[RMDB]
RNA sequence: GGGAACGACUCGAGUAGAGUCGAAAAACUGCCAUACGUGGCAGAAACACGCCUUACCAGGACUAAACAGCGUGUCUAAAAAACAGUCCUUCACACCUGAUCUGGAGGGUAGAUCAGGAAUACUAAAAAAAUCGGGUGAAGUUCGCUUCACCCGAAAUCAAAGGCUUAAGUUCGCUUAAGCCUUUGAAAAAGAAACAACAACAACAAC
Reactivity to DMS in 0.01 (KOAc 150mM, MgCl2 10mM, bicine 150mM(pH8.5), 24C), signal-to-noise 1, nucleotides 027 to 156: a080c030u000g020c000c000a070u010a090c260g010u000g010g020c000a010g010a300a150a070c000a010c000g000c030c020u000u010a080c080c040a070g000g050a130c020u020a080a140a040c070a040g000c000g050u000g030u020c120u000a000a030a050a130a000a000c020a080g000u000c000c000u020u000c080a150c080a210c000c010u000g000a030u000c010u000g000g040a140g020g030g020u000a030g020a030u000c010a000g010g020a040a050u000a150c080u020a000a000a050a160a040a070a190u000c010g040g000g030u000g050a060a010g010u000u010c190g000c030u010u010c040a010c000c000c030g000a000a000a000
Reactivity to 2A3 in 0.01 (KOAc 150mM, MgCl2 10mM, bicine 150mM(pH8.5), 24C), signal-to-noise 2, nucleotides 027 to 156: a000c000u000g000c010c000a010u060a060c210g070u030g000g000c000a000g000a020a010a000c000a000c000g010c000c000u030u040a030c010c080a010g000g010a000c010u070a130a040a000c010a010g000c000g000u000g030u020c110u040a000a000a020a020a000a000c010a000g000u000c010c000u050u130c070a090c020a010c000c000u000g000a010u020c000u040g020g060a070g110g040g060u060a000g000a010u020c030a000g090g000a010a030u120a070c080u160a050a010a010a050a010a000a140u010c000g000g010g000u000g020a000a000g020u060u100c180g000c070u000u020c020a010c050c010c000g000a000a000a000
Notes: An RNA of 207 nucleotides, treated with DMS and 2A3 and read out base by base. The 2A3 profile rests on 1,583 reads. The DMS profile rests on 1,769 reads. The reactions ran in a buffer of 150 mM KOAc, 10 mM MgCl2 and 150 mM bicine (pH 8.5), at 24 C.